[RMDB]
RNA sequence: GGGAACGACUCGAGUAGAGUCGAAAAAAAAAGGACCUACAGCCGAGCGAGUGACUGAAAACGGCAAAGACACGAAGCAUCGUUAUACCUAAAUGGUCGUAGCGAAAUAAGAGUUGUUCCCAGUAAAACACUGAAGGUAGUUCGCUACCUUCAGUGUAAAAGAAACAACAACAACAAC
Reactivity to DMS in 0.01 (KOAc 150mM, MgCl2 10mM, bicine 150mM(pH8.5), 24C), signal-to-noise 1, nucleotides 027 to 126: a010a040a080a230a190g000g020a030c030c010u000a050c050a180g010c070c020g010a140g020c030g030a130g000u000g020a030c050u010g010a010a030a080a120c110g020g000c030a070a080a050g000a070c070a050c060g000a030a130g030c030a190u000c020g000u030u000a000u000a040c000c000u000a050a020a070u030g000g000u000c160g060u000a080g010c000g000a060a020a100u010a040a140g000a000g000u000u000g000u010u000c000c000c000a190g010u000a080a040a190
Reactivity to 2A3 in 0.01 (KOAc 150mM, MgCl2 10mM, bicine 150mM(pH8.5), 24C), signal-to-noise 1, nucleotides 027 to 126: a000a000a000a000a090g080g010a020c000c000u010a000c020a050g000c020c030g030a030g030c010g040a000g070u070g020a060c030u070g030a040a070a070a040c040g030g020c090a100a060a000g040a010c000a000c090g050a060a040g030c020a080u000c000g020u010u020a040u020a040c020c030u110a220a230a170u240g010g030u050c030g000u000a000g000c000g020a120a060a060u140a100a030g000a000g010u000u040g000u000u000c010c000c000a000g000u000a000a020a000

Overview
This 177-nucleotide RNA was probed chemically with DMS and 2A3. For DMS, 953 sequencing reads were counted. 2A3 adducts were read by reverse transcription with SuperScript II with manganese. It was measured as part of the RMDB library M2PK90. The 2A3 profile rests on 1,336 reads. The RNA was probed in 150 mM KOAc, 10 mM MgCl2 and 150 mM bicine (pH 8.5) at 24 C.